RNA sequence: GGGAACGACUCGAGUAGAGUCGAAAAUGUGCCACUGCACUCCAGCCUGGGUGACAAAGCCAUACCCUGUCUCAAAACAAAAAACAACCAAAUGGGAGGUGCUGUGUGAAGUGUGCCAUGGAGGGUAGGCAUUACUGAUGGUACAUUGCAGGCAUUAGAUGGGCCAUUUAUUCGUAAAUGGCCCAUCAAAAGAAACAACAACAACAAC
Reactivity to 2A3 in 0.01 (KOAc 150mM, MgCl2 10mM, bicine 150mM(pH8.5), 24C), signal-to-noise 1, nucleotides 027 to 156: u050g010u070g020c020c000a070c090u090g000c000a030c000u000c050c010a070g030c000c030u040g030g020g000u080g010a020c000a010a090a000g030c000c000a010u040a060c030c010c010u060g030u000c040u000c140a050a150a130a080c110a070a100a000a000a000a060c130a040a020c060c000a000a010a180u110g040g010g010a040g080g010u050g000c080u020g000u020g070u040g030a110a010g000u000g000u000g090c000c000a000u040g000g120a050g020g000g000u030a020g000g000c000a070u110u230a130c120u020g070a010u000g010g000u040a000c000a020u000u030g040c020a010g040g000c070a040u000u290a050

Record summary
Source: RMDB library OK3TST, as collected in RNAgym. Structure probing data (2A3) for a 207-nucleotide construct. Reactivities are given for positions 27 through 156.